RNA sequence: GGGAACGACUCGAGUAGAGUCGAAAAGAAUCACCGUACCUAUUUAGGUUUAGGCUCCAAGAUCGGUGGAUAGCAGCCCUAUCAAUAUCUAGGAGAACUGUGCUAUGUUUAGAAGAUUAGGUAGUCUAUUACACAGCCAUGUUCGCAUGGCUGUGAAGAACAUUAUUACGUUCGCGUAAUAAUGUUCAAAAGAAACAACAACAACAAC
Reactivity to 2A3 in 0.01 (KOAc 150mM, MgCl2 10mM, bicine 150mM(pH8.5), 24C), signal-to-noise 7, nucleotides 027 to 156: g070a030a070u110c030a030c070c020g040u060a040c000c010u060a140u190u230u220a060g020g010u030u050u090a030g000g000c000u010c030c030a120a030g030a110u040c030g030g060u050g050g040a020u030a020g000c030a010g020c030c010c000u050a040u120c070a130a110u070a050u290c070u030a020g000g040a080g030a090a080c050u070g020u010g110c020u030a030u070g110u080u080u050a130g040a170a020g010a040u060u060a020g040g020u030a010g020u020c020u020a090u040u120a040c000a000c000a000g000c000c000a000u010g030u040u040c090g000c110a000u000g000g000c010u010g000u000g000a000a010
Reactivity to DMS in 0.01 (KOAc 150mM, MgCl2 10mM, bicine 150mM(pH8.5), 24C), signal-to-noise 4, nucleotides 027 to 156: g020a100a090u000c010a130c010c020g020u010a060c000c020u000a160u010u000u000a070g010g020u000u000u000a040g010g000c030u010c030c030a060a100g010a050u000c060g000g030u000g020g020a090u010a070g020c040a120g010c090c070c020u010a170u000c030a070a150u010a100u010c090u000a120g000g000a080g000a080a060c060u000g010u000g020c020u010a070u000g020u000u000u000a110g010a110a160g010a110u000u000a080g010g020u000a080g020u000c030u000a090u010u000a210c020a010c010a010g000c010c000a020u000g000u000u000c300g000c020a060u000g000g000c010u020g010u010g000a020a100